Structure probing data (2A3 and DMS) for a 207-nucleotide construct. DMS adducts were read by reverse transcription with MarathonRT. The 2A3 profile rests on 1,221 reads. Conditions: 150 mM KOAc, 10 mM MgCl2 and 150 mM bicine (pH 8.5), 24 C.
RNA sequence: GGGAACGACUCGAGUAGAGUCGAAAAUCAAUAAAGCUUCUCUUUGUCUUGUUCUCCUUCCAUUUGUCCACGUUCCUCAUUCUUCCCUGCCAAAGGAGAAGAACUUGGGAGCUGCUGGAUGGUGGGGCUGAAAGCUGUAAAACAAACAGGGCUAACAUAAUGGCAUAAUAUUCGUAUUAUGCCAUUAAAAAGAAACAACAACAACAAC
Reactivity to 2A3 in 0.01 (KOAc 150mM, MgCl2 10mM, bicine 150mM(pH8.5), 24C), signal-to-noise 3, nucleotides 027 to 156: u100c020a020a100u120a190a090a020g050c030u120u110c020u050c000u020u030u060g040u010c030u120u150g000u040u020c040u010c010c000u120u000c040c010a070u090u080u300g020u000c000c000a010c050g000u000u000c010c010u060c010a020u030u000c000u000u010c000c000c000u010g130c080c090a190a180a020g030g030a270g010a080a000g000a030a020c080u160u160g000g000g000a010g000c010u040g030c020u000g010g000a000u010g000g010u010g000g010g010g020c060u040g080a080a080a050g020c040u050g040u140a090a060a020a060c040a010a030a000c000a010g010g040g000c020u030a160a030c010a160
Reactivity to DMS in 0.01 (KOAc 150mM, MgCl2 10mM, bicine 150mM(pH8.5), 24C), signal-to-noise 4, nucleotides 027 to 156: u010c060a100a150u000a090a080a100g020c020u000u010c020u000c030u000u000u010g020u000c040u000u000g010u000u010c010u000c010c010u000u010c010c000a080u000u010u000g000u010c000c010a060c030g000u000u040c020c010u020c300a100u000u000c010u000u000c010c000c010u010g050c030c300a060a190a250g020g000a050g010a020a010g010a000a010c050u000u010g020g020g010a050g010c000u000g030c130u000g030g010a040u000g020g040u000g010g020g030g020c070u000g000a080a080a130g010c060u000g000u000a060a050a060a110c050a080a090a070c020a060g010g010g060c030u000a040a080c080a230